Structure probing data (2A3 and DMS) for a 177-nucleotide construct. For DMS the reverse transcriptase was MarathonRT. Values are in units of 0.01, from 0 to 300, in steps of 10. Conditions: 150 mM KOAc, 10 mM MgCl2 and 150 mM bicine (pH 8.5), 24 C.

RNA sequence: GGGAACGACUCGAGUAGAGUCGAAAAGUCCACACCGGUGUUUCGGACAGCGGUUCGAUUCCGCUCAGCUCCAUUCUCCCUUCGGGGCUGCAAUGGUUUCGACGGGGCAUAAGGAGGGUGACUGAAGACACUGCAUAAGUUUCGACUUAUGCAGUGUAAAAGAAACAACAACAACAAC
Reactivity to 2A3 in 0.01 (KOAc 150mM, MgCl2 10mM, bicine 150mM(pH8.5), 24C), signal-to-noise 6, nucleotides 027 to 126: g030u010c020c000a050c020a030c060c050g070g030u030g020u040u040u080c070g060g050a070c040a020g030c020g040g000u020u060c030g030a020u080u000c010c000g000c010u010c010a010g000c010u000c010c000a040u110u020c040u080c040c010c000u040u040c040g010g000g000g000c010u000g000c010a070a150u190g030g000u000u020u050c010g010a020c010g010g000g030g030c040a110u090a160a070g040g010a030g000g030g010u030g060a150c020u040g010a030a000g050
Reactivity to DMS in 0.01 (KOAc 150mM, MgCl2 10mM, bicine 150mM(pH8.5), 24C), signal-to-noise 7, nucleotides 027 to 126: g010u010c010c040a130c170a090c070c050g000g020u010g010u010u000u000c070g010g000a110c170a060g000c010g010g010u010u010c130g010a300u020u010c000c010g020c040u000c040a050g010c040u010c000c000a080u000u010c060u000c010c010c020u010u010c120g000g000g010g000c030u000g010c190a090a040u020g010g020u000u010u000c040g010a050c100g000g000g010g000c210a120u020a100a090g010g000a060g000g000g010u000g010a130c030u010g020a060a130g000